RNA sequence: GGGAACGACUCGAGUAGAGUCGAAAACCUGAUGAUUGAGUGUUCACCUGGAUUUUCUGACCACCUUCCCUUGUGCUAUUCUGUCAGCCUACAGAUUCUGGUACCUGGAUUUUUACCCUUGGUGAUUCCUUGUAGAGUUAUUCGUAACUCUACAAGGAAAAGAAACAACAACAACAAC
Reactivity to DMS in 0.01 (KOAc 150mM, MgCl2 10mM, bicine 150mM(pH8.5), 24C), signal-to-noise 3, nucleotides 027 to 126: c010c010u010g020a080u000g000a080u000u010g000a090g020u010g000u000u010c040a070c020c020u000g000g010a090u020u010u000u000c050u020g020a130c050c040a100c050c060u010u000c020c010c010u000u000g010u010g010c030u000a040u000u000c040u000g020u010c040a070g000c050c030u010a080c070a060g000a090u010u000c060u000g010g020u000a040c010c030u000g010g010a050u010u000u000u020u010a110c040c010c020u010u010g020g010u000g010a130u000u000
Reactivity to 2A3 in 0.01 (KOAc 150mM, MgCl2 10mM, bicine 150mM(pH8.5), 24C), signal-to-noise 6, nucleotides 027 to 126: c000c010u040g070a110u070g010a020u090u200g040a050g070u100g040u030u050c020a040c040c020u020g050g040a070u050u040u020u060c040u070g080a090c000c010a010c030c000u040u040c010c000c000u010u050g050u020g030c020u030a040u060u060c000u020g060u040c020a020g030c000c000u030a030c010a020g050a050u090u030c020u100g020g020u030a050c000c000u010g050g020a080u020u020u020u050u190a100c000c010c000u030u040g020g000u030g040a030u040u020